[RMDB]
RNA sequence: GGGAACGACUCGAGUAGAGUCGAAAAAAAGGCUUAUCAAGAGAGGUGGAGGAACUGGCCCGAUGAAACCCGGCAGCCAGAAAUGGUGCCAAUUCGUGCAGCGGAAACGUUGAAAGAUGAGCCGAAAUCUUAGUGAAUAGUUCGCUAUUCACUAAGAAAAAGAAACAACAACAACAAC
Reactivity to DMS in 0.01 (KOAc 150mM, MgCl2 10mM, bicine 150mM(pH8.5), 24C), signal-to-noise 3, nucleotides 027 to 126: a070a100a110g020g020c000u010u000a030u000c000a130a080g000a290g000a090g000g020u010g010g010a150g000g010a070a090c040u000g000g000c010c030c010g020a050u000g010a060a090a070c170c190c040g000g030c000a070g020c020c010a010g000a050a100a100u000g010g020u020g030c020c000a060a140u000u010c040g010u010g000c020a020g020c020g000g000a140a080a060c040g010u010u000g000a090a100a090g010a030u000g000a020g010c000c000g020a040a100a100
Reactivity to 2A3 in 0.01 (KOAc 150mM, MgCl2 10mM, bicine 150mM(pH8.5), 24C), signal-to-noise 1, nucleotides 027 to 126: a000a000a000g000g000c010u020u010a000u030c040a110a000g070a010g010a020g100g090u070g030g070a070g010g060a000a070c030u020g050g020c000c000c030g040a040u150g030a070a070a050c030c040c000g000g000c040a030g130c000c000a000g050a020a050a000u070g050g010u020g000c000c000a020a020u070u030c030g010u060g060c010a020g000c010g000g040a040a010a010c040g040u020u020g020a020a040a000g000a000u010g000a000g000c000c000g020a030a020a000